An RNA of 177 nucleotides, treated with 2A3 and DMS and read out base by base. The 2A3 profile rests on 2,146 reads.

RNA sequence: GGGAACGACUCGAGUAGAGUCGAAAAGAUAUGGAUAUCAACAGCAUAAUCACCGAAGAACUCGGAAACGAGGGAGGUGAUUAUGACAUGAUAUCCUAAGUCAAAGCUUGGAGUUCGCUCCAAGCAAGAUCUAGUGCACGUUCGCGUGCACUAGAUCAAAAGAAACAACAACAACAAC
Reactivity to 2A3 in 0.01 (KOAc 150mM, MgCl2 10mM, bicine 150mM(pH8.5), 24C), signal-to-noise 1, nucleotides 027 to 126: g010a010u100a030u140g010g000a010u010a000u010c000a010a190c060a180g000c010a020u010a010a000u030c000a010c000c040g180a300a050g010a100a010c020u010c000g030g000a110a030a020c000g000a020g000g000g050a010g000g000u050g020a000u000u000a000u010g000a010c000a020u000g000a010u000a000u000c010c000u010a090a010g030u070c090a210a000a050g030c000u000u000g030g000a020g020u080u180c290g090c110u010c030c000a000a000g000c000a000a010
Reactivity to DMS in 0.01 (KOAc 150mM, MgCl2 10mM, bicine 150mM(pH8.5), 24C), signal-to-noise 1, nucleotides 027 to 126: g000a090u000a300u000g000g000a000u000a000u000c000a000a080c180a090g000c000a000u000a000a050u000c000a000c000c060g010a120a110g000a130a270c000u000c000g000g000a060a150a160c020g000a020g010g000g000a030g000g000u000g000a000u000u000a000u000g000a010c000a210u010g000a000u000a000u000c010c000u000a130a030g010u000c010a100a130a230g000c010u000u000g000g010a030g010u000u010c250g060c000u000c020c000a010a010g000c000a030a070